[RMDB]
RNA sequence: GGGAACGACUCGAGUAGAGUCGAAAAUGACUAGCUGUAACUAAAACCUUUCAAAUUUUUCCACUUGUUCUUUACUAAACAGUUGAAAUAUAUUCUGCGGUGGAUAAGCUAGUUUUGUAAUCGCAGAAAAUGGAUACGAGUUCGCUCGUAUCCAUUUAAAAGAAACAACAACAACAAC
Reactivity to DMS in 0.01 (KOAc 150mM, MgCl2 10mM, bicine 150mM(pH8.5), 24C), signal-to-noise 1, nucleotides 027 to 126: u000g000a050c000u000a010g020c000u000g000u000a100a110c170u000a130a110a160a070c070c010u000u000u000c100a070a090a220u000u000u000u000u000c010c060a040c020u010u020g000u000u000c100u000u020u020a180c200u020a070a010a000c020a010g010u000u000g000a010a040a030u000a060u000a090u000u000c010u000g000c010g020g020u000g000g020a090u000a030a040g000c010u000a020g040u000u000u010u000g030u010a120a060u000c010g010c030a010g010a030
The data come from the RNA Mapping Database (RMDB), library OK2TST.
An RNA of 177 nucleotides, treated with DMS and read out base by base.
For DMS, 960 sequencing reads were counted.
In probing experiments dimethyl sulfate is read out at A N1 and C N3, which are open when not base-paired.
Reactivities are given for positions 27 through 126.
Conditions: 150 mM KOAc, 10 mM MgCl2 and 150 mM bicine (pH 8.5), 24 C.